[RMDB]
RNA sequence: GGGAACGACUCGAGUAGAGUCGAAAACCGUUGGGUUCACACCCCCAGGCCGCGGGCCGGCUGCUCUUCUUUCUCUUUCGUCGUCAUCCUUGGCUAACCGCUCAAGUUCCUCCUCUUCCUCUCGGCUGUAGGUAUGGCUUCGGCCAUACCAAAAGAAACAACAACAACAAC
Reactivity to 2A3 in 0.01 (KOAc 150mM, MgCl2 10mM, bicine 150mM(pH8.5), 24C), signal-to-noise 6, nucleotides 027 to 129: c000c000g000u030u090g060g010g010u070u070c060a020c010a040c080c000c000c000c020a040g010g020c010c000g090c050g040g000g020c030c020g030g000c020u040g020c010u030c000u100u020c010u000u110u000c040u000c000u030u050u060c060g040u010c010g040u010c030a040u050c070c020u020u030g000g000c010u020a090a040c040c020g040c030u010c060a050a020g010u020u030c000c000u010c000c000u020c030u040u030c010c000u010c000u000c000g030g000c010u040g030u090a000
Reactivity to DMS in 0.01 (KOAc 150mM, MgCl2 10mM, bicine 150mM(pH8.5), 24C), signal-to-noise 5, nucleotides 027 to 129: c050c000g040u020u030g000g000g000u030u050c130a090c220a030c080c030c020c000c040a100g030g040c020c010g030c080g040g020g060c080c040g040g030c040u000g030c040u020c050u020u020c000u000u030u010c020u030c040u000u000u000c060g040u030c060g040u000c040a030u050c050c040u030u030g030g000c030u000a120a140c070c030g070c000u030c060a120a060g020u000u000c030c020u000c050c000u030c060u000u000c000c000u010c020u020c020g000g000c000u040g000u030a070

An RNA of 170 nucleotides, treated with 2A3 and DMS and read out base by base. Source: RMDB library 15KLIB, as collected in RNAgym. DMS (dimethyl sulfate) methylates the pairing face of unpaired adenines and cytosines. 2A3 adducts were read by reverse transcription with SuperScript II with manganese. The RNA was probed in 150 mM KOAc, 10 mM MgCl2 and 150 mM bicine (pH 8.5) at 24 C.